Conditions: 150 mM KOAc, 10 mM MgCl2 and 150 mM bicine (pH 8.5), 24 C. Structure probing data (DMS and 2A3) for a 177-nucleotide construct.

RNA sequence: GGGAACGACUCGAGUAGAGUCGAAAAGAUAUGGAAUACCAAGCUUUGAUCGUAGGUAUCGGAAACGAUACUACGGGAGCUUGAGUAUUCCUAAGUCAAAACCUCCAGCAGGUUCGCCUGCUGGAGGGAUUACCUGUAUGUUCGCAUACAGGUAAUCAAAAGAAACAACAACAACAAC
Reactivity to DMS in 0.01 (KOAc 150mM, MgCl2 10mM, bicine 150mM(pH8.5), 24C), signal-to-noise 7, nucleotides 027 to 126: g000a040u000a300u000g000g000a010a010u000a010c000c000a010a010g010c000u000u000u020g000a080u010c010g010u000a020g020g010u000a010u000c010g020g000a090a050a110c000g010a020u000a020c000u000a010c000g010g010g010a020g020c000u000u000g000a140g010u000a010u000u000c000c000u000a010a100g010u000c020a140a070a110a300c020c000u000c000c000a010g010c000a020g010g010u000u010c300g020c010c000u000g010c000u000g000g000a000g010g000
Reactivity to 2A3 in 0.01 (KOAc 150mM, MgCl2 10mM, bicine 150mM(pH8.5), 24C), signal-to-noise 9, nucleotides 027 to 126: g010a000u030a020u110g000g000a010a000u010a000c010c010a000a010g030c030u300u300u300g130a170u280c000g010u020a070g300g120u060a060u000c010g000g000a040a020a020c000g000a000u000a010c000u000a000c000g030g070g050a060g000c000u000u010g070a120g000u000a000u010u000c000c000u000a020a000g030u010c020a020a040a120a270c010c000u000c000c000a000g000c000a000g040g090u120u240c300g140c080c010u000g000c000u010g000g000a000g000g010
Values cover nucleotides 27 to 126.